Structure probing data (2A3 and DMS) for a 177-nucleotide construct. For 2A3, 1,777 sequencing reads were counted. For DMS the reverse transcriptase was MarathonRT.

[RMDB]
RNA sequence: GGGAACGACUCGAGUAGAGUCGAAAAUUAGCUGCAUUAUAAACUUGCGUCAUGUUAUUUAAUUUCACAGAUAGGUUCAUGGCCGUGUUUUUCUGAUACACAUUAUCUUUAUAUUGGUUUUCAGAAAACUAUCAGUACGGUUCGCCGUACUGAUAGUAAAAGAAACAACAACAACAAC
Reactivity to 2A3 in 0.01 (KOAc 150mM, MgCl2 10mM, bicine 150mM(pH8.5), 24C), signal-to-noise 3, nucleotides 027 to 126: u090u030a030g000c060u090g000c030a060u120u020a100u240a270a120a010c030u070u240g010c050g000u000c000a000u040g010u040u080a060u030u090u040a130a100u040u210u140c080a050c010a050g120a110u070a040g000g070u030u020c010a000u040g010g000c000c000g030u030g000u060u050u010u040u020c020u020g020a010u020a050c090a000c010a140u050u050a080u120c060u040u300u090a130u050a050u080u010g020g010u080u100u050u090c010a010g000a000a040a030
Reactivity to DMS in 0.01 (KOAc 150mM, MgCl2 10mM, bicine 150mM(pH8.5), 24C), signal-to-noise 2, nucleotides 027 to 126: u010u010a090g010c060u010g040c060a070u050u010a100u050a070a090a060c040u000u010g030c100g030u000c030a030u000g000u010u000a030u010u000u000a070a090u000u010u010c210a100c210a130g000a070u010a020g000g000u000u000c020a060u000g010g010c030c020g000u000g000u000u000u000u000u000c020u010g000a020u000a030c050a080c020a030u000u000a030u000c140u020u020u010a040u000a070u020u010g000g010u010u010u000u000c000a030g000a060a050a080